[RMDB]
RNA sequence: GGGAACGACUCGAGUAGAGUCGAAAACACUACGCCAAUUUCUCCGACUGGGACACCUACCGCAGCCUCGCCCCACUGCAGGGACUGUUGUUCCCGCAACGGGCCAGCGACAUGAUCCAGUCGUUGGCCCAACUUGGUCAUUCGUGACCAAGUUGGGAAAAGAAACAACAACAACAAC
Reactivity to 2A3 in 0.01 (KOAc 150mM, MgCl2 10mM, bicine 150mM(pH8.5), 24C), signal-to-noise 9, nucleotides 027 to 126: c070a020c060u180a050c070g040c040c030a090a120u040u100u040c040u000c010c020g090a080c030u040g010g020g050a030c020a050c040c030u110a080c020c030g030c040a020g020c010c010u040c040g020c000c000c000c010a070c040u030g000c070a170g010g010g010a020c040u070g070u170u080g030u080u030c000c000c000g000c020a060a080c070g020g000g000c000c010a010g000c010g020a020c010a070u190g040a080u080c030c020a010g000u000c000g000u010u020g010g010
Reactivity to DMS in 0.01 (KOAc 150mM, MgCl2 10mM, bicine 150mM(pH8.5), 24C), signal-to-noise 8, nucleotides 027 to 126: c070a060c090u020a060c090g010c020c020a060a100u020u000u010c020u010c030c010g000a140c080u020g000g010g010a080c080a080c040c030u010a060c050c020g010c040a080g000c000c020u020c120g000c030c010c010c050a100c100u000g000c050a110g010g000g010a060c070u010g000u010u000g000u010u000c000c000c000g010c160a070a070c160g010g000g000c010c010a010g000c000g000a020c010a050u010g000a080u030c160c130a200g000u000c000g020u010u000g000g000
Structure probing data (2A3 and DMS) for a 177-nucleotide construct. For 2A3, 42,472 sequencing reads were counted. The RNA was probed in 150 mM KOAc, 10 mM MgCl2 and 150 mM bicine (pH 8.5) at 24 C. DMS adducts were read by reverse transcription with MarathonRT. For 2A3 the reverse transcriptase was SuperScript II with manganese.